[RMDB]
RNA sequence: GGGAACGACUCGAGUAGAGUCGAAAACAACACGUCCUCGUCGUACAGAGUGGUAACAUGUGUCACCACAUAUCCAAGCUUGGGUACACGCGCUUGACCCAACCCCUUGGGCGGAUGGUGGCACAUGAAAAGAAGUAACACUUCGGUGUUACUUCAACACUGAAUGGAAGUUCGCUUCCAUUCAGUGAAAAGAAACAACAACAACAAC
Reactivity to DMS in 0.01 (KOAc 150mM, MgCl2 10mM, bicine 150mM(pH8.5), 24C), signal-to-noise 4, nucleotides 027 to 156: c060a060a100c070a080c060g000u000c020c010u000c070g020u010c080g040u000a100c050a090g000a190g020u000g010g020u010a080a160c020a040u010g020u010g010u010c020a010c000c000a030c040a100u010a030u000c010c010a020a060g010c110u000u010g010g010g010u000a090c030a100c100g040c160g040c090u000u000g010a100c000c020c010a030a050c030c110c080c010u000u000g000g020g010c090g020g010a090u000g010g000u000g000g000c000a020c000a000u000g010a030a050a060a110g000a020a010g010u000a010a010c000a010c000u000u010c270g050g000u010g010u000u000a010c000u010u000c010a030a110
Reactivity to 2A3 in 0.01 (KOAc 150mM, MgCl2 10mM, bicine 150mM(pH8.5), 24C), signal-to-noise 8, nucleotides 027 to 156: c050a020a020c020a010c070g120u080c010c010u040c020g140u040c050g050u170a090c080a090g060a030g070u130g050g080u150a090a020c000a000u000g000u000g010u010c000a000c010c010a010c010a040u150a030u080c000c000a000a010g000c020u010u020g000g010g020u170a260c030a020c050g270c030g060c170u090u110g030a020c000c000c000a000a020c040c010c010c010u000u000g010g020g000c050g090g070a220u020g010g000u000g000g000c000a000c000a000u000g000a000a000a000a010g000a000a000g000u010a000a000c000a000c000u030u060c190g030g000u000g000u000u000a000c000u000u000c000a010a010